[RMDB]
RNA sequence: GGGAACGACUCGAGUAGAGUCGAAAAAACAAUCAGAGUGAGUUCAUCACACGUCAUGCGAUGGAUGGCAAGUUCACGUUUGUGGAUCAGCGUGUCCUUAACAUAUUGGGAUAUACUCCUACUGAGCACUCCAAUUAUCUUUCGAGAUAAUUGGAGUAAAAGAAACAACAACAACAAC
Reactivity to DMS in 0.01 (KOAc 150mM, MgCl2 10mM, bicine 150mM(pH8.5), 24C), signal-to-noise 9, nucleotides 027 to 126: a070a040c130a120a100u000c020a030g010a090g010u010g010a030g000u000u010c190a050u000c010a030c020a040c300g010u000c230a040u000g010c070g010a110u010g000g000a020u000g020g010c030a060a120g010u000u000c010a010c020g000u010u010u010g020u000g000g000a020u000c070a250g000c010g030u000g010u000c010c010u000u000a140a060c040a020u000a070u000u000g000g000g000a030u000a110u000a050c020u000c010c010u000a110c040u000g000a050g010c240
Reactivity to 2A3 in 0.01 (KOAc 150mM, MgCl2 10mM, bicine 150mM(pH8.5), 24C), signal-to-noise 9, nucleotides 027 to 126: a000a000c060a010a020u040c020a010g020a020g050u220g030a000g010u090u060c080a020u020c010a030c010a010c100g100u130c080a020u060g010c020g070a040u090g010g010a010u020g030g010c020a050a040g020u000u020c010a010c060g080u130u220u300g040u040g030g020a040u080c040a020g010c050g080u100g000u020c010c000u050u130a030a020c020a030u050a060u050u090g030g000g010a000u030a010u020a080c010u010c010c010u060a260c020u030g030a020g050c020